[RMDB]
RNA sequence: GGGAACGACUCGAGUAGAGUCGAAAACGAUCAGUACGUUCGCGUACUGAUCGAAGCUACUGGAGACAGUAGCAAGUCUAAGACCUUGUUGCCCGGAAACAGGGAAAAAUGCUCCAAGGCCCCAGGGGCAUACUUAGACAACCGGGAAGGGGCCAAAGUAUAUAGAUAAAUUCGUUUAUCUAUAUACAAAAGAAACAACAACAACAAC
Reactivity to DMS in 0.01 (KOAc 150mM, MgCl2 10mM, bicine 150mM(pH8.5), 24C), signal-to-noise 1, nucleotides 027 to 156: c020g000a050u000c000a080g040u000a000c020g090u000u020c300g060c020g020u000a010c040u000g000a000u000c020g020a040a050g020c000u000a020c000u000g010g000a300g000a300c020a020g020u000a010g070c000a030a190g010u000c030u000a120a100g000a300c000c030u000u000g010u010u010g000c090c060c080g090g040a260a070a000c040a090g000g000g010a010a010a070a100a060u000g020c000u000c000c000a030a030g030g000c000c000c000c000a190g000g020g000g000c030a020u010a050c030u000u000a110g010a110c020a110a140c150c040g080g020g000a150a100g000g090g010g120c000c010a030a050a140
Reactivity to 2A3 in 0.01 (KOAc 150mM, MgCl2 10mM, bicine 150mM(pH8.5), 24C), signal-to-noise 1, nucleotides 027 to 156: c000g000a000u010c000a010g000u010a010c000g010u020u070c230g000c010g090u000a000c000u000g000a000u000c010g000a000a000g010c000u000a000c000u000g010g010a050g010a020c000a000g000u000a000g040c000a010a010g000u000c010u010a010a070g030a210c020c000u020u050g010u020u010g070c070c100c020g040g070a070a050a010c020a020g000g060g000a070a020a030a050a030u030g000c000u010c000c020a030a120g000g000c000c000c000c000a000g010g000g000g000c000a010u020a000c010u010u000a020g000a060c020a020a050c100c060g170g000g040a110a050g000g000g010g020c010c000a000a000a010